Source: RMDB library OK1LIB, as collected in RNAgym. The record gives the reactivity of an RNA of 177 nucleotides to 2A3. The RNA was probed in 150 mM KOAc, 10 mM MgCl2 and 150 mM bicine (pH 8.5) at 24 C. For 2A3 the reverse transcriptase was SuperScript II with manganese.
[RMDB]
RNA sequence: GGGAACGACUCGAGUAGAGUCGAAAAGAGAGGGGACCGCGGCGCUCAGGCCCGGCCACAGCGCCAGCACUUCGGCGUAGACCUCGGCGGGACGGGCAAGAAUCUGCGUUUCGAGCACCUCCAACCGCACGUGACUCCGGUUCGCCGGAGUCACGUGAAAAGAAACAACAACAACAAC
Reactivity to 2A3 in 0.01 (KOAc 150mM, MgCl2 10mM, bicine 150mM(pH8.5), 24C), signal-to-noise 1, nucleotides 027 to 126: g180a000g000a020g050g050g010g050a070c030c060g030c020g000g020c040g020c050u040c070a000g110g060c000c040c000g010g040c000c030a040c080a020g050c020g010c000c000a110g090c090a050c130u050u080c110g000g000c010g000u060a120g030a240c000c000u030c090g000g000c090g060g000g040a000c080g000g010g000c000a080a020g050a030a090u070c030u060g030c000g040u040u020u060c000g000a000g080c050a110c000c010u000c040c000a000a060c000c010g020